[RMDB]
RNA sequence: GGGAACGACUCGAGUAGAGUCGAAAAUCGGGCGUGAAUACACGUUAGGGUCAGCAGAAGUAGUGUUCGACGGCAUCGACGUGGGGGUUGACAUCGCCAAGACGUGGUUCUCUGGGGACUACGUGCAAGAACUCCAACGGAUGCUCAAGAAAGUCCGCUGAUCUUAUCUUUUCGAAGAUAAGAUCAGAAAAGAAACAACAACAACAAC
Reactivity to DMS in 0.01 (KOAc 150mM, MgCl2 10mM, bicine 150mM(pH8.5), 24C), signal-to-noise 4, nucleotides 027 to 156: u000c040g010g000g020c020g030u000g010a110a130u000a110c060a080c040g010u010u000a070g010g020g030u000c030a100g030c040a100g000a090a100g010u010a080g010u000g010u000u000c030g020a170c100g000g000c020a130u000c010g010a120c050g010u000g020g010g000g030g010u000u000g010a110c110a150u000c070g010c050c070a080a170g010a050c010g040u000g010g020u000u000c010u010c130u000g020g060g040g010a030c000u000a000c000g000u000g000c050a090a110g000a050a050c020u010c020c010a040a070c030g010g000a080u010g000c010u000c040a060a130g000a070a070a140g010u000c020c040g030
Reactivity to 2A3 in 0.01 (KOAc 150mM, MgCl2 10mM, bicine 150mM(pH8.5), 24C), signal-to-noise 9, nucleotides 027 to 156: u080c020g010g020g000c040g010u060g050a110a040u130a100c040a020c060g030u060u110a090g040g020g020u070c050a020g010c030a020g050a150a020g060u150a030g020u030g050u080u060c050g040a050c040g020g000c000a010u010c020g180a200c020g010u030g000g000g000g000g000u010u050g040a060c050a150u100c080g030c090c030a040a030g070a010c010g000u010g010g020u050u010c080u020c140u210g200g040g000g000a000c000u010a000c010g000u020g020c010a040a020g010a050a020c010u000c010c010a020a010c000g010g000a010u010g000c020u030c060a020a050g040a060a040a010g030u020c020c020g020